Structure probing data (DMS and 2A3) for a 177-nucleotide construct. It was measured as part of the RMDB libraries RFM100 and RFMREP. The RNA was probed in 150 mM KOAc, 10 mM MgCl2 and 150 mM bicine (pH 8.5) at 24 C. For 2A3 the reverse transcriptase was SuperScript II with manganese.
RNA sequence: GGGAACGACUCGAGUAGAGUCGAAAAGUAACACACUACACACUCGUUUUGUAAUCGAGAAGUAGUUGCAAGAACGGUCCUCUCAUUGCCUGACUAGCUGAGAGCCAUCCUUCUAUCCCCACCGCCAACUCUCCCCACAAUUCGUUGUGGGGAGAGUAAAAGAAACAACAACAACAAC
Reactivity to DMS in 0.01 (KOAc 150mM, MgCl2 10mM, bicine 150mM(pH8.5), 24C), signal-to-noise 3, nucleotides 027 to 126: g000u060a050a120c150a180c090a050c010u000a000c000a090c150a300c000u000c060g060u000u020u030u050g000u030a120a050u000c050g030a000g010a300a090g030u000a000g000u000u030g020c150a030a070g000a060a080c000g000g000u000c240c010u020c030u000c040a060u020u000g030c000c000u010g040a120c090u030a180g050c020u000g020a070g000a010g000c020c020a050u000c030c020u020u000c040u010a100u030c020c000c000c050a030c120c010g020c140c070a110
Reactivity to 2A3 in 0.01 (KOAc 150mM, MgCl2 10mM, bicine 150mM(pH8.5), 24C), signal-to-noise 6, nucleotides 027 to 126: g090u120a110a010c030a000c000a000c050u020a000c020a000c000a030c030u000c030g060u010u020u120u160g300u280a130a080u110c000g010a000g020a070a020g020u000a000g000u000u070g010c040a010a060g020a060a030c060g000g040u060c020c000u010c010u040c020a060u060u170g040c000c020u070g060a080c030u080a030g010c040u040g010a020g000a010g070c010c010a050u060c020c010u030u060c020u020a110u080c010c000c000c010a040c010c030g080c020c000a020